[RMDB]
This 177-nucleotide RNA was probed chemically with 2A3 and DMS. The DMS profile rests on 2,809 reads.
RNA sequence: GGGAACGACUCGAGUAGAGUCGAAAAUGUUUUCCGCGUCGAAGAAAGCUGGCGCAGAUUUGAUCUCUGCUAGUCGGCCGUCAUCGGUGCCGCGCAUCAGCCGCGACGGCGUAUCGAAUCCACUGGACGAAACACCUAUGUUCGCAUAGGUGUUUCGAAAAGAAACAACAACAACAAC
Reactivity to 2A3 in 0.01 (KOAc 150mM, MgCl2 10mM, bicine 150mM(pH8.5), 24C), signal-to-noise 3, nucleotides 027 to 126: u170g040u130u020u000u000c020c010g000c000g020u030c000g050a090a070g110a150a190a030g050c040u020g000g000c010g000c000a010g020a040u120u120u170g070a100u080c040u010c010u080g000c000u050a050g040u040c030g070g000c000c020g030u040c010a090u080c030g040g020u080g050c030c010g000c010g000c000a120u100c050a140g100c040c050g000c030g050a100c000g020g000c010g000u060a070u130c040g020a010a060u040c050c000a020c110u030g030g020a030
Reactivity to DMS in 0.01 (KOAc 150mM, MgCl2 10mM, bicine 150mM(pH8.5), 24C), signal-to-noise 2, nucleotides 027 to 126: u050g020u000u000u010u030c020c050g020c000g050u000c000g000a050a090g010a090a090a160g030c120u000g000g010c070g040c090a020g040a040u000u010u060g020a090u010c240u000c070u030g000c000u010a020g020u000c050g040g010c020c100g000u000c060a070u000c070g000g000u000g010c070c010g000c120g010c050a190u030c040a170g000c060c090g000c130g020a030c010g000g040c000g000u010a050u050c060g000a050a100u030c040c030a070c000u020g000g000a300
Conditions: 150 mM KOAc, 10 mM MgCl2 and 150 mM bicine (pH 8.5), 24 C.
For 2A3, 2,035 sequencing reads were counted.
For 2A3 the reverse transcriptase was SuperScript II with manganese.